[RMDB]
RNA sequence: GGGAACGACUCGAGUAGAGUCGAAAAGCAUCUUGCUUCGGCAAGAUGCAAAUAACGGUCAGUGCUUGCAGCUAGUCGUUAAUGCUAACUGGCCUUACGCUAAAACGAAUGCGUUCGCGCAUUCGAACAGGACGACUUAGUUCGCUAAGUCGUCCUGAAAAGAAACAACAACAACAAC
Reactivity to DMS in 0.01 (KOAc 150mM, MgCl2 10mM, bicine 150mM(pH8.5), 24C), signal-to-noise 1, nucleotides 027 to 126: g000c000a000u000c000u000u000g020c010u020u010c230g000g050c000a030a000g030a050u000g030c000a020a090a050u000a090a030c160g010g020u000c070a000g000u000g020c140u000u000g010c080a000g010c060u010a030g010u000c180g020u000u010a050a120u000g010c040u000a060a070c010u000g010g000c000c000u000u030a050c090g000c060u000a090a060a080a170c060g030a010a000u000g010c000g000u000u000c160g000c010g000c000a010u000u000c000g000a060a080
Reactivity to 2A3 in 0.01 (KOAc 150mM, MgCl2 10mM, bicine 150mM(pH8.5), 24C), signal-to-noise 1, nucleotides 027 to 126: g000c000a020u000c000u000u000g000c010u060u050c120g110g000c000a000a000g000a010u000g000c000a000a000a000u020a000a010c070g000g000u010c000a000g000u010g070c150u150u150g040c000a060g020c040u080a060g110u190c040g110u150u160a060a020u100g010c010u020a080a000c000u010g020g010c020c000u010u040a070c090g000c020u180a050a040a010a050c030g000a000a000u020g020c000g000u000u000c270g000c010g000c050a020u000u000c000g010a040a010

Source information: The data come from the RNA Mapping Database (RMDB), library M2PK50. Chemical mapping of a 177-nucleotide RNA with DMS and 2A3. For 2A3 the reverse transcriptase was SuperScript II with manganese. Values are in units of 0.01, from 0 to 300, in steps of 10.